[RMDB]
RNA sequence: GGGAACGACUCGAGUAGAGUCGAAAAUCUGGCUCCUGGGACUCUAGAAGGAGUCAGUCUGCAACAAUAAGUGGUGAGUUCUUCUGUCCAGUGUCAGUGUUUGAUGGUGGCUGUAGACCUGCCAGAUGUUGCGUUAAGUGUUCGCACUUAACGCAACAAAAGAAACAACAACAACAAC
Reactivity to 2A3 in 0.01 (KOAc 150mM, MgCl2 10mM, bicine 150mM(pH8.5), 24C), signal-to-noise 4, nucleotides 027 to 126: u030c000u010g000g000c000u010c000c010u060g040g120g100a140c030u030c080u190a130g090a110a030g080g000a020g000u000c000a000g010u000c000u140g040c020a070a030c000a000a220u200a200a110g080u010g080g000u100g160a090g000u090u030c000u010u000c000u040g050u040c040c000a120g150u050g000u040c030a040g020u010g110u300u290u150g070a010u000g000g260u010g000g000c000u030g030u050a000g010a020c040c010u020g020c000c040a050g040a090u030
Reactivity to DMS in 0.01 (KOAc 150mM, MgCl2 10mM, bicine 150mM(pH8.5), 24C), signal-to-noise 2, nucleotides 027 to 126: u000c000u000g000g000c010u000c000c010u000g000g000g020a180c280u050c160u070a110g010a140a030g040g000a020g030u000c000a000g010u010c070u020g030c060a140a060c150a040a090u020a100a120g030u000g020g000u000g000a070g000u020u000c000u000u000c000u000g000u050c000c000a000g020u000g010u000c010a050g020u010g000u040u000u000g000a050u000g010g010u000g010g000c020u000g000u000a040g000a050c030c010u000g000c000c010a050g040a060u000

Source: RMDB libraries RFM100 and RFMREP, as collected in RNAgym.
The record gives the reactivity of an RNA of 177 nucleotides to 2A3 and DMS.
The RNA was probed in 150 mM KOAc, 10 mM MgCl2 and 150 mM bicine (pH 8.5) at 24 C.
DMS adducts were read by reverse transcription with MarathonRT.